[RMDB]
Structure probing data (2A3) for a 207-nucleotide construct.
The RNA was probed in 150 mM KOAc, 10 mM MgCl2 and 150 mM bicine (pH 8.5) at 24 C.
RNA sequence: GGGAACGACUCGAGUAGAGUCGAAAAGGACUGCGCAGUCCAGCAACAUCAGCAGAGAGCCCGCUAUACGUGACGGAUUGGCUGAAGCGUACAGAAAUAUUGAGCCUCCUGCAAGAGGCAGCCAAGCAAAACGUACGUGAGUUCGCUCACGUACGAAGUCACGUCUUCUGUUCGCAGAAGACGUGACAAAAGAAACAACAACAACAAC
Reactivity to 2A3 in 0.01 (KOAc 150mM, MgCl2 10mM, bicine 150mM(pH8.5), 24C), signal-to-noise 1, nucleotides 027 to 156: g000g000a000c000u050g040c170g090c090a000g030u000c000c000a000g100c030a000a120c010a120u240c020a010g000c000a070g080a030g000a060g260c000c030c000g000c010u220a130u000a220c070g010u030g020a000c030g060g000a090u100u050g010g000c000u000g010a170a000g020c000g050u030a030c070a000g250a030a130a020u300a170u180u290g060a020g090c000c040u020c010c050u030g060c010a030a060g020a020g030g000c000a000g000c070c000a020a030g000c080a050a060a030a000c000g000u000a000c000g000u000g020a000g000u020u120c150g000c150u000c010a050c020g000u000a000c000g000a000a000